The record gives the reactivity of an RNA of 207 nucleotides to DMS and 2A3. For DMS the reverse transcriptase was MarathonRT. The RNA was probed in 150 mM KOAc, 10 mM MgCl2 and 150 mM bicine (pH 8.5) at 24 C.
[RMDB]
RNA sequence: GGGAACGACUCGAGUAGAGUCGAAAAUGCACACUCAUAGACAAAGGACAAUCUGAUCUUUAUGUGACCAAGAUAAAAUUUGAUGGGAGAUCAGCAAGACAUAAAGGAAGGUUCUUAAAUGACAUAUUUAUCCCAACAUUGUUCUGGGAAGAAAAGACGUAUUAAUCCCUUUCGAGGGAUUAAUACGAAAAGAAACAACAACAACAAC
Reactivity to DMS in 0.01 (KOAc 150mM, MgCl2 10mM, bicine 150mM(pH8.5), 24C), signal-to-noise 2, nucleotides 027 to 156: u000g020c050a110c040a040c100u030c050a100u000a100g000a160c060a110a130a080g010g010a080c020a060a150u010c030u000g000a080u010c020u010u000u000a060u020g010u010g020a100c010c010a020a180g030a160u000a080a070a140a210u000u010u000g010a070u000g020g010g030a120g010a060u000c030a080g010c050a050a030g030a080c030a050u000a020a070a100g000g000a120a090g000g010u000u000c020u000u000a030a050a110u000g000a020c040a060u010a090u000u000u000a160u030c000c010c000a060a070c090a170u000u000g030u000u000c050u000g030g000g020a100a220g000a050a070a040a140g010a210
Reactivity to 2A3 in 0.01 (KOAc 150mM, MgCl2 10mM, bicine 150mM(pH8.5), 24C), signal-to-noise 4, nucleotides 027 to 156: u110g000c030a020c010a030c040u060c050a090u100a080g070a060c050a050a060a030g040g000a010c030a060a090u090c030u050g040a050u030c010u040u120u050a130u130g060u080g040a040c020c040a040a030g020a100u150a090a140a100a090u140u120u210g050a080u060g040g000g010a090g020a040u010c000a010g030c000a020a020g040a030c020a040u070a030a050a000g030g010a010a010g040g000u020u000c020u030u100a150a210a150u050g010a020c000a010u130a090u040u100u110a050u060c010c020c000a020a040c060a140u050u130g010u080u010c020u030g040g010g000a040a020g080a030a130a010a010g080a010